RNA sequence: GGGAACGACUCGAGUAGAGUCGAAAACUAAGCACUCUCACUCUCCUGCUGCUCCUCUGUGGACAUGGUAAGGAAGGGCCAGGGAAGGGUUUGGGGAAAUCUAGAGGGUAGGCUGCUAUGUAGGGGUGGGCAUGUGAGCCUGAAUGAGUGAGGAGAGAGCGUGUAAUCAAUUCGUUGAUUACACGCUAAAAGAAACAACAACAACAAC
Reactivity to 2A3 in 0.01 (KOAc 150mM, MgCl2 10mM, bicine 150mM(pH8.5), 24C), signal-to-noise 1, nucleotides 027 to 156: c060u080a160a040g030c090a070c020u010c010u020c020a010c030u000c000u000c000c000u040g000c010u040g000c010u090c000c010u020c060u050g120u200g020g060a120c030a130u260g000g040u090a070a000g000g010a080a040g020g060g000c060c100a050g000g000g210a020a150g130g040g040u060u160u270g060g000g020g080a000a010a180u030c090u030a010g000a010g110g010g000u030a010g040g000c040u010g070c010u030a030u120g070u140a110g030g020g020g050u090g020g010g000c000a010u110g040u020g060a010g000c030c010u010g010a000a050u010g010a000g000u020g110a010g000g000a000g000a000g000